Chemical mapping of a 177-nucleotide RNA with 2A3 and DMS.
Reactivities are rounded to 0.1 and cut off at 0 and 3.
The data come from the RNA Mapping Database (RMDB), library M2PK90.
Conditions: 150 mM KOAc, 10 mM MgCl2 and 150 mM bicine (pH 8.5), 24 C.
RNA sequence: GGGAACGACUCGAGUAGAGUCGAAAAUCAUUGGCUUCGCUGCGCGCUGCGUUGCCUAGGCUUCAGAUGCUUCGUACUGUUGCCAAGGUUGCAAUUUCCAAACGCUAAUGCGAAAGUGUGCAAACAACUUCUAACCCAUGUUCGCAUGGGUUAGAAGAAAAGAAACAACAACAACAAC
Reactivity to 2A3 in 0.01 (KOAc 150mM, MgCl2 10mM, bicine 150mM(pH8.5), 24C), signal-to-noise 4, nucleotides 027 to 126: u040c020a020u030u140g050g000c010u020u000c010g000c040u110g010c020g000c000g000c000u010g000c010g020u010u020g000c000c000u010a050g000g000c010u010u010c010a060g050a270u120g060c100u150u130c060g040u090a080c010u010g000u040u010g000c020c020a030a050g030g010u000u060g050c030a070a110u020u050u020c020c000a070a040a010c020g030c040u130a170a070u220g020c030g010a030a000a010g030u030g020u040g020c020a020a080a080c020a060a050
Reactivity to DMS in 0.01 (KOAc 150mM, MgCl2 10mM, bicine 150mM(pH8.5), 24C), signal-to-noise 4, nucleotides 027 to 126: u010c030a100u000u000g000g020c000u000u010c010g010c030u000g020c070g020c090g010c030u010g030c060g010u010u000g000c000c010u010a150g000g040c000u000u000c010a020g010a150u010g010c200u000u000c160g020u000a060c010u000g010u010u000g010c020c020a100a060g010g010u000u010g010c140a060a150u000u000u000c020c020a070a090a170c030g010c030u010a070a140u010g020c020g000a060a100a030g020u010g010u000g000c060a100a090a060c140a050a070